[RMDB]
RNA sequence: GGGAACGACUCGAGUAGAGUCGAAAAGGUCAACUCCAUGAUUAGCAUGGAGCUGUAGGAGUCUAAAUUGGGGACGCAGAUGUUUGGGACGUCACCUUGCAGUGUUAACUUGGCUCUCAUGAACCUCGACAUGCAGGAUCUUCGGAUCCUGCAUGUCAAAAGAAACAACAACAACAAC
Reactivity to DMS in 0.01 (KOAc 150mM, MgCl2 10mM, bicine 150mM(pH8.5), 24C), signal-to-noise 2, nucleotides 027 to 126: g000g000u000c020a060a110c010u000c000c000a000u010g000a300u020u020a130g000c000a000u000g010g000a000g000c010u000g030u000a220g010g010a070g000u000c010u040a000a030a040u030u060g000g020g000g050a060c100g040c060a210g000a110u050g020u010u050u000g050g000g000a100c060g070u000c020a070c000c000u000u000g040c150a140g010u000g000u000u000a090a160c080u000u000g000g010c010u000c030u000c100a130u010g020a070a150c000c000u000c170
Reactivity to 2A3 in 0.01 (KOAc 150mM, MgCl2 10mM, bicine 150mM(pH8.5), 24C), signal-to-noise 3, nucleotides 027 to 126: g000g040u020c030a010a010c020u020c000c000a000u000g010a160u110u220a040g110c000a000u010g000g030a010g000c000u050g000u070a100g010g060a010g020u000c030u180a000a130a140u190u090g090g000g000g000a020c030g000c030a060g050a230u190g150u200u190u240g170g020g060a110c030g080u060c020a160c010c000u070u060g020c010a070g020u030g050u250u090a040a010c020u020u070g020g000c030u000c000u000c010a140u120g040a050a000c000c000u070c140